This 177-nucleotide RNA was probed chemically with DMS and 2A3. 2A3 adducts were read by reverse transcription with SuperScript II with manganese. The 2A3 profile rests on 733 reads. Conditions: 150 mM KOAc, 10 mM MgCl2 and 150 mM bicine (pH 8.5), 24 C.
[RMDB]
RNA sequence: GGGAACGACUCGAGUAGAGUCGAAAAAAAUCUCCAAAUUGUCGAGUAUGUCCUCGUCCCUGGUAAAAUGGUGGCUGAAGGCUGGCCCGUUGUAGGCCAGGGUCUGGGCCACGUGCUGAAAGUCCACCGGCUAUACUCAGUUCGCUGAGUAUAGCCGAAAAGAAACAACAACAACAAC
Reactivity to DMS in 0.01 (KOAc 150mM, MgCl2 10mM, bicine 150mM(pH8.5), 24C), signal-to-noise 2, nucleotides 027 to 126: a050a120a030u030c000u010c000c070a060a040a110u050u000g000u000c030g000a060g000u010a120u010g000u010c040c000u000c000g010u010c020c010c010u000g000g030u010a030a070a110a040u030g020g030u000g010g010c000u000g000a080a060g030g010c000u000g010g000c000c000c040g000u010u050g020u040a050g000g010c020c010a020g000g020g020u000c030u000g000g030g000c000c000a030c160g020u020g000c000u000g000a100a080a100g010u010c020c020a020c170
Reactivity to 2A3 in 0.01 (KOAc 150mM, MgCl2 10mM, bicine 150mM(pH8.5), 24C), signal-to-noise 2, nucleotides 027 to 126: a000a010a010u070c120u000c010c000a000a230a190u010u040g060u040c040g000a000g050u050a120u180g050u070c040c000u040c020g010u050c050c000c000u000g070g050u120a010a190a000a120u280g060g000u000g000g000c010u080g030a120a000g020g020c010u000g010g000c000c000c000g040u080u260g050u290a050g000g030c020c000a050g020g000g000u000c000u000g000g000g020c000c000a040c050g050u140g060c010u110g040a050a030a000g020u020c030c020a030c060